[RMDB]
RNA sequence: GGGAACGACUCGAGUAGAGUCGAAAAUUCGGCAGUGGCGAGGGCGCCCAGGAACAUCAUCCAGUAUUUCUGUAUGUCGCUCCAUGGAAUCGCCGCGGCCCAGCUGUGCUGCCCCCGCAGCGCGGCCCACCUCCCUGGUAUUCGUACCAGGGAGGUGAAAAGAAACAACAACAACAAC
Reactivity to DMS in 0.01 (KOAc 150mM, MgCl2 10mM, bicine 150mM(pH8.5), 24C), signal-to-noise 2, nucleotides 027 to 126: u020u030c170g020g030c010a080g060u010g000g020c000g020a040g010g020g020c180g020c090c030c000a020g010g000a010a010c030a080u000c030a010u000c050c010a030g010u020a180u000u000u000c000u000g000u000a020u000g000u000c080g030c020u000c010c030a090u000g010g000a140a080u000c000g000c000c000g010c000g010g010c010c010c270a120g010c000u000g010u000g010c010u000g000c010c040c000c070c300g010c010a010g000c010g010c030g000g000c010c210
Reactivity to 2A3 in 0.01 (KOAc 150mM, MgCl2 10mM, bicine 150mM(pH8.5), 24C), signal-to-noise 2, nucleotides 027 to 126: u130u100c040g010g000c000a010g000u000g020g000c000g010a020g070g180g070c090g060c020c000c000a010g000g000a000a010c000a040u060c010a010u060c130c030a030g050u120a250u120u230u110c000u010g000u000a040u030g050u030c150g000c050u000c000c030a080u050g000g050a040a050u040c000g000c010c000g000c020g010g010c000c000c010a010g010c010u020g000u020g010c020u000g010c010c010c000c000c000g000c000a000g000c020g000c010g000g000c000c030
Chemical mapping of a 177-nucleotide RNA with DMS and 2A3. For DMS, 1,938 sequencing reads were counted. Conditions: 150 mM KOAc, 10 mM MgCl2 and 150 mM bicine (pH 8.5), 24 C. For DMS the reverse transcriptase was MarathonRT.